The data come from the RNA Mapping Database (RMDB), library M2RFPK.
This 207-nucleotide RNA was probed chemically with 2A3 and DMS.
Values cover nucleotides 27 to 156.
For 2A3 the reverse transcriptase was SuperScript II with manganese.
RNA sequence: GGGAACGACUCGAGUAGAGUCGAAAAGACUGAUGUAGAGUUCGGUUGGAGCGACGAGUAUUUAGCUUGAGAUAGCUAAAUCACCUCGGUAUGAUUAGGGUGAGACCUAGGAACCGUAGGGGUAUUCAAUGCUGUAUUGCGUUCGCGCAAUACAGAACUACUAGAUUUGAUUCGUCAAAUCUAGUAGAAAAGAAACAACAACAACAAC
Reactivity to 2A3 in 0.01 (KOAc 150mM, MgCl2 10mM, bicine 150mM(pH8.5), 24C), signal-to-noise 9, nucleotides 027 to 156: g040a010c070u080g030a050u110g060u120a040g020a030g060u060u080c040g000g030u010u040g020g020a050g030c050g070a070c020g000a020g020u100a030u010u010u000a010g000c010u020u020g020a030g010a080u110a030g010c000u010a000a010a010u040c030a050c000c010u010c010g000g020u210a170u130g060a070u040u060a020g000g020g010u040g060a070g030a040c000c010u010a020g030g010a030a030c020c020g010u050a040g010g020g000g010u030a090u070u130c090a100a100u140g050c000u000g000u000a000u000u000g010c010g020u020u050c220g000c000g000c100a000a000u000a000c000a000g000a000a000
Reactivity to DMS in 0.01 (KOAc 150mM, MgCl2 10mM, bicine 150mM(pH8.5), 24C), signal-to-noise 4, nucleotides 027 to 156: g010a080c040u000g000a060u000g010u000a100g010a140g010u000u000c010g010g020u000u000g010g000a120g010c030g010a050c030g000a070g010u000a060u010u000u000a000g020c010u000u010g000a250g010a210u000a020g000c000u000a010a010a030u000c010a040c020c000u000c010g010g000u000a100u010g020a210u000u010a030g010g010g010u000g010a290g000a120c020c020u000a070g010g010a090a080c020c030g030u000a080g020g000g020g020u000a090u000u000c060a050a110u000g010c010u000g010u000a000u000u000g010c000g020u000u020c300g060c020g010c000a010a020u000a010c000a000g010a040a130